This 207-nucleotide RNA was probed chemically with DMS and 2A3.
RNA sequence: GGGAACGACUCGAGUAGAGUCGAAAAAUCCAGGCUAGAAAGUUUACAAUUCUUGGUGGAUAUGACUUGUUGCGUUAUGUUGGUUUCUGUCCAUGUAACGAACAUGCAAACUGGUCAGAAACAGAUUGUAUGUAGGUUAAUCCUAAAUGGUCCCCUACACACACACAUUGUUCGCAAUGUGUGUGUGAAAAGAAACAACAACAACAAC
Reactivity to DMS in 0.01 (KOAc 150mM, MgCl2 10mM, bicine 150mM(pH8.5), 24C), signal-to-noise 2, nucleotides 027 to 156: a100u000c020c020a130g020g040c020u010a100g000a040a070a110g030u000u000u000a190c100a120a120u000u000c040u000u000g060g030u000g000g010a080u010a080u010g010a070c020u000u000g000u010u000g010c040g030u000u010a090u010g020u000u000g020g010u000u000u010c030u010g020u000c020c020a060u020g010u000a070a070c080g030a160a110c040a030u000g040c000a000a040a100c050u020g000g010u030c030a220g000a190a050a120c030a010g000a120u000u000g010u000a030u010g010u000a070g000g010u000u000a060a160u020c050c050u010a070a040a090u000g010g000u000c030c070c030c030u020a150
Reactivity to 2A3 in 0.01 (KOAc 150mM, MgCl2 10mM, bicine 150mM(pH8.5), 24C), signal-to-noise 4, nucleotides 027 to 156: a000u030c020c000a040g090g070c030u080a020g070a040a050a040g050u250u300u210a130c110a120a120u060u030c020u050u030g020g010u020g020g010a030u080a110u170g040a060c040u120u070g040u080u060g050c080g050u100u070a050u110g050u060u040g040g030u010u050u060c050u040g050u010c040c010a050u060g010u040a030a020c020g030a060a010c010a010u060g010c010a050a010a130c020u010g000g050u120c120a020g160a020a120a000c000a010g000a100u000u020g000u010a010u030g020u010a000g040g010u050u110a070a060u160c010c020u070a100a160a080u020g000g000u050c050c010c000c000u080a030
Background:
The DMS profile rests on 3,478 reads. DMS adducts were read by reverse transcription with MarathonRT. 2A3 is a SHAPE reagent: it acylates the 2'-hydroxyl of flexible nucleotides of all four kinds. For 2A3, 2,079 sequencing reads were counted. Reactivities are given for positions 27 through 156.